About this RNA
This 207-nucleotide RNA was probed chemically with 2A3 and DMS. For DMS the reverse transcriptase was MarathonRT. The reactions ran in a buffer of 150 mM KOAc, 10 mM MgCl2 and 150 mM bicine (pH 8.5), at 24 C.

[RMDB]
RNA sequence: GGGAACGACUCGAGUAGAGUCGAAAAACGAAAACUACGCACUCUCAGCUUAAUAACCUGCGCUGAGCCCUUCUCCCCCAGCUUGCCUGUGUCCUAGGGAAUUGGAAGGUCAUCCUUCACAGGAUCGUCUAGGUAAUCCCUUUCGAGGGAUUACCAACUAAUUACGCGAAUUCGUUCGCGUAAUUAGAAAAGAAACAACAACAACAAC
Reactivity to 2A3 in 0.01 (KOAc 150mM, MgCl2 10mM, bicine 150mM(pH8.5), 24C), signal-to-noise 4, nucleotides 027 to 156: a000c070g060a070a040a030a030c080u220a050c090g040c070a070c010u040c000u000c000a010g010c000u110u080a110a060u130a210a250c000c050u100g020c030g010c050u020g020a020g000c020c000c000u130u040c060u110c000c000c000c000c000a000g000c040u050u150g020c000c000u020g010u010g000u080c010c020u030a030g000g000g090a050a050u080u080g030g040a040a020g040g020u050c040a040u070c020c000u050u050c010a020c030a050g000g020a010u040c030g070u030c110u030a020g000g000u000a000a010u000c000c000c000u050u010u030c160g060a020g000g000g000a000u000u000a000c000c000a000a000
Reactivity to DMS in 0.01 (KOAc 150mM, MgCl2 10mM, bicine 150mM(pH8.5), 24C), signal-to-noise 2, nucleotides 027 to 156: a130c070g000a080a050a070a140c030u000a020c060g020c040a060c070u000c050u000c080a090g020c040u000u000a090a120u000a120a150c030c020u000g000c080g010c030u000g020a080g020c040c030c010u000u000c050u000c030c000c000c030c010a100g010c060u010u000g000c020c020u000g050u010g000u010c050c020u000a110g020g030g010a060a130u000u010g020g020a060a050g010g020u010c050a140u000c020c020u010u000c080a090c080a050g010g010a070u010c080g020u050c060u000a100g030g010u000a010a010u000c000c000c000u000u010u000c250g000a060g040g020g010a010u000u000a010c000c000a000a060
For 2A3, 2,595 sequencing reads were counted.